An RNA of 207 nucleotides, treated with 2A3 and read out base by base. 2A3 adducts were read by reverse transcription with SuperScript II with manganese. The 2A3 profile rests on 522 reads. The reactions ran in a buffer of 150 mM KOAc, 10 mM MgCl2 and 150 mM bicine (pH 8.5), at 24 C.
[RMDB]
RNA sequence: GGGAACGACUCGAGUAGAGUCGAAAAUUGGCGAAUGCCUGUGGAUCUACAUUUGUUGCGGGUUCGAGACCCGUCAGAGCCCGGCUCUGUAGCUCAAUGGUAGAGCGGUGUAUUCACAUAAGCUUGUAAAAGACACGUGCCUUCGGGCACGUGUCAACUUCUGGUUAGAGUUCGCUCUAACCAGAAGAAAAGAAACAACAACAACAAC
Reactivity to 2A3 in 0.01 (KOAc 150mM, MgCl2 10mM, bicine 150mM(pH8.5), 24C), signal-to-noise 1, nucleotides 027 to 156: u130u060g060g000c040g110a300a060u240g000c000c000u040g040u020g010g010a050u010c010u090a000c000a140u080u030u160g070u040u010g000c020g000g000g010u000u030c020g000a000g020a010c010c000c000g020u010c000a030g010a000g000c050c290c300g110g000c000u000c000u000g030u010a020g000c000u000c010a020a090u150g300g000u140a000g010a000g010c030g000g010u040g020u010a020u050u020c020a000c000a020u140a080a010g080c120u100u090g070u080a090a090a030a000g000a000c020a020c000g000u000g000c020c000u020u050c290g020g000g000c090a010c000g030u020g010u000c000a000a000